Source: RMDB library M2RFPK, as collected in RNAgym.
An RNA of 207 nucleotides, treated with 2A3 and read out base by base.
Reactivities are given for positions 27 through 156.
[RMDB]
RNA sequence: GGGAACGACUCGAGUAGAGUCGAAAAGAUCUGCGCCGAUCCGAAACGCUAGCAAACAGCCCGCAUCAUGUCGUCUCCUAACUUCGACGUGGUGAAAUACUGAGCUUAUGCGAGUACGCCUGUUAGCAAUAGAUCAGAACGUUCGCGUUCUGAUCAAGCUAUCACUCCACUUCGGUGGAGUGAUAGCAAAAGAAACAACAACAACAAC
Reactivity to 2A3 in 0.01 (KOAc 150mM, MgCl2 10mM, bicine 150mM(pH8.5), 24C), signal-to-noise 2, nucleotides 027 to 156: g020a040u000c030u140g000c040g050c060c030g030a040u060c030c020g050a050a050a020c030g000c050u040a020g040c020a030a040a170c010a030g010c020c000c000g020c000a030u020c000a010u010g020u020c000g070u040c090u140c080c130u170a100a100c060u070u040c030g000a000c000g000u020g000g000u050g030a060a100a000u150a040c020u070g040a050g000c000u150u120a070u140g020c020g010a020g030u040a040c050g030c000c010u060g020u120u030a020g020c020a120a190u060a160g000a000u030c000a000g030a020a020c040g000u050u060c190g010c000g080u010u000c030u000g000a000u000c000a000a000

Record summary:
The reactions ran in a buffer of 150 mM KOAc, 10 mM MgCl2 and 150 mM bicine (pH 8.5), at 24 C. For 2A3 the reverse transcriptase was SuperScript II with manganese. For 2A3, 935 sequencing reads were counted.